Notes: The record gives the reactivity of an RNA of 207 nucleotides to 2A3. Conditions: 150 mM KOAc, 10 mM MgCl2 and 150 mM bicine (pH 8.5), 24 C. The data come from the RNA Mapping Database (RMDB), library ARCHII.
RNA sequence: GGGAACGACUCGAGUAGAGUCGAAAAAAAAGCGGUCUCGUGUGAGAAGACCCGAUAAGUCGAGUCACACGGGGGCUUCUGACAGUGAUUUGUCGUGGGGCUGGUACAGUGGGGAAUGUCAGCAUACAGGGGGAACAGUCAUGGAAGUCGUGGUUACGACGUAAGAUUGGUUCGCCAAUCUUACGUCAAAAGAAACAACAACAACAAC
Reactivity to 2A3 in 0.01 (KOAc 150mM, MgCl2 10mM, bicine 150mM(pH8.5), 24C), signal-to-noise 2, nucleotides 027 to 156: a000a000a000a000g080c070g020g070u040c010u000c020g000u020g010u040g000a040g000a150a040g000a020c000c020c050g030a150u100a230a000g000u010c000g000a050g200u030c010a010c000a020c000g020g000g000g000g000c040u080u040c020u090g050a040c040a010g000u050g090a080u000u210u150g050u060c010g000u120g000g000g010g010c040u030g030g010u110a080c030a050g040u040g020g010g020g050a030a030u060g040u050c030a030g010c030a070u110a100c050a050g000g000g030g020g050a010a070c030a020g080u050c000a030u070g030g000a040a000g010u010c020g030u050g010g010u090u050a070c130